[RMDB]
The record gives the reactivity of an RNA of 177 nucleotides to 2A3 and DMS.
It was measured as part of the RMDB library OK1LIB.
For DMS, 19,701 sequencing reads were counted.
2A3 adducts were read by reverse transcription with SuperScript II with manganese.
RNA sequence: GGGAACGACUCGAGUAGAGUCGAAAAGACGCCUGUGUGGCGAAGCGAGCAAUGGAAUAAGCCGCAAUAGAAGAUGAGAUGGAAGCGGCAAGAUAGAAUGCUCGCAAGGAGAUCCAUCUCACAGAGAACCACUAUUUAUAUUCGUAUAAAUAGUGGUAAAAGAAACAACAACAACAAC
Reactivity to 2A3 in 0.01 (KOAc 150mM, MgCl2 10mM, bicine 150mM(pH8.5), 24C), signal-to-noise 9, nucleotides 027 to 126: g090a020c030g020c020c020u230g090u110g140u250g210g000c010g020a040a020g000c010g000a000g000c010a060a140u120g050g100a120a050u150a160a010g000c000c000g010c020a020a050u150a080g160a140a010g100a170u060g000a010g000a010u010g000g010a120a020g000c000g000g000c010a010a010g040a010u100a020g190a150a060u070g000c010u000c000g000c000a000a020g090g020a070g000a020u000c000c000a000u000c000u030c000a000c010a010g130a000g030a030
Reactivity to DMS in 0.01 (KOAc 150mM, MgCl2 10mM, bicine 150mM(pH8.5), 24C), signal-to-noise 7, nucleotides 027 to 126: g010a180c020g030c000c000u000g030u030g030u060g010g020c000g010a100a150g000c000g000a020g000c010a060a080u050g010g020a250a100u010a130a140g010c000c000g010c000a160a110u060a110g010a120a110g000a150u000g000a010g000a010u000g000g010a060a140g010c000g000g000c000a020a070g010a150u020a080g010a120a090u000g000c000u000c000g020c020a070a060g020g010a160g010a150u010c000c010a000u000c000u000c000a030c120a160g000a130g000a110